[RMDB]
RNA sequence: GGGAACGACUCGAGUAGAGUCGAAAAACGUCGUACGCGACGAAUUAAUGAUGAUACACAAAAUCAUAUGUCAAUUCCUUUAACAUGAAAUAGAAUGAUUAUAACGAUUUUCCAUUUAACUGACGAAAUCGUCCGAAGAAUUCGUUCUUCGGACGAUAAAAGAAACAACAACAACAAC
Reactivity to DMS in 0.01 (KOAc 150mM, MgCl2 10mM, bicine 150mM(pH8.5), 24C), signal-to-noise 3, nucleotides 027 to 126: a130c030g040u010c020g080u030a120c200g080c040g000a010c000g020a030a160u000u050a030a030u000g000a020u000g000a030u000a040c190a150c300a010a070a070a010u000c010a010u020a060u010g010u040c090a060a050u000u000c000c010u000u040u010a020a110c170a040u000g000a040a060a020u000a040g000a060a060u020g010a060u020u000a100u010a170a090c080g000a070u000u010u000u010c040c030a070u000u010u000a050a110c160u010g010a120c130g030a030a020
Reactivity to 2A3 in 0.01 (KOAc 150mM, MgCl2 10mM, bicine 150mM(pH8.5), 24C), signal-to-noise 4, nucleotides 027 to 126: a000c000g000u000c000g000u040a060c250g010c010g050a000c030g020a000a020u180u080a060a050u070g050a010u010g030a030u040a100c120a000c040a090a060a020a070u020c010a020u020a050u070g150u050c040a040a120u050u100c000c000u120u190u180a090a080c080a080u080g120a080a060a060u090a100g080a060a050u090g030a030u140u120a100u140a190a020c050g000a070u000u000u120u000c000c020a050u030u070u200a130a120c090u090g120a040c060g050a080a110
Source information:
Structure probing data (DMS and 2A3) for a 177-nucleotide construct. The reactions ran in a buffer of 150 mM KOAc, 10 mM MgCl2 and 150 mM bicine (pH 8.5), at 24 C. For DMS the reverse transcriptase was MarathonRT. 2A3 adducts were read by reverse transcription with SuperScript II with manganese. It was measured as part of the RMDB libraries RFM100 and RFMREP.